This 177-nucleotide RNA was probed chemically with 2A3 and DMS. Values cover nucleotides 27 to 126. The reactions ran in a buffer of 150 mM KOAc, 10 mM MgCl2 and 150 mM bicine (pH 8.5), at 24 C. Values are in units of 0.01, from 0 to 300, in steps of 10. For DMS, 15,823 sequencing reads were counted.
[RMDB]
RNA sequence: GGGAACGACUCGAGUAGAGUCGAAAACUUGGGUGAGCCCACCGCCGGCUGCAUCGAGGCUGGUUGCCAGGGCACGUUGCGUGUCGUCCUCAGCGUGACCGGAACUCGCGCGCAUUCAGCGCGUUCGCAUUUCAAGUGGAUUCGUCCACUUGAAAUGAAAAGAAACAACAACAACAAC
Reactivity to 2A3 in 0.01 (KOAc 150mM, MgCl2 10mM, bicine 150mM(pH8.5), 24C), signal-to-noise 5, nucleotides 027 to 126: c020u070u070g080g000g010u060g060a030g040c010c020c000a040c030c010g020c020c010g050g010c010u040g010c030a120u130c090g020a020g020g030c040u030g040g030u070u100g080c030c030a120g000g010g010c010a010c030g080u070u160g080c060g030u070g050u080c050g020u070c000c020u040c030a020g000c020g020u010g020a060c000c000g010g030a070a050c030u040c080g010c000g000c020g000c020a040u240u210c070a090g000c000g000c020g020u080u050c050g020
Reactivity to DMS in 0.01 (KOAc 150mM, MgCl2 10mM, bicine 150mM(pH8.5), 24C), signal-to-noise 8, nucleotides 027 to 126: c090u000u010g010g010g020u000g000a110g020c020c010c020a120c130c090g010c050c040g000g010c030u000g010c070a070u010c120g000a080g000g000c040u000g010g010u000u000g010c040c030a140g010g000g010c020a030c040g020u010u010g010c100g010u000g000u000c060g010u000c030c010u000c040a070g010c050g020u000g000a050c020c010g000g000a070a080c100u000c100g000c040g010c010g000c030a160u010u010c190a140g010c010g010c020g010u000u010c110g010